[RMDB]
Annotation
Chemical mapping of a 177-nucleotide RNA with 2A3. Reactivities are given for positions 27 through 126. For 2A3 the reverse transcriptase was SuperScript II with manganese. The data come from the RNA Mapping Database (RMDB), library OK1LIB.
RNA sequence: GGGAACGACUCGAGUAGAGUCGAAAAGAAAAAUUAUCUAACUGAGGGUAUUAGAUCGAAUAACUCGUUCUUGAUGAGUUCCGUAAAAGCGGUCUUGAGAUUAGCAAAUUCUAAUCUAAUCGAAAAAGGGUUUGUAUCAGUUCGCUGAUACAAACCCAAAAGAAACAACAACAACAAC
Reactivity to 2A3 in 0.01 (KOAc 150mM, MgCl2 10mM, bicine 150mM(pH8.5), 24C), signal-to-noise 1, nucleotides 027 to 126: g020a000a210a000a000a000u160u090a000u000c000u030a000a080c040u150g150a070g070g050g030u000a080u080u040a080g100a070u050c040g100a110a030u080a010a010c000u000c000g230u300u030c020u000u130g000a070u000g000a000g000u020u000c000c030g000u000a000a000a120a030g100c070g030g020u070c100u060u150g180a030g000a000u020u020a000g070c110a190a100a150u130u070c010u050a050a000u040c020u020a020a000u200c020g000a120a000a000a060a000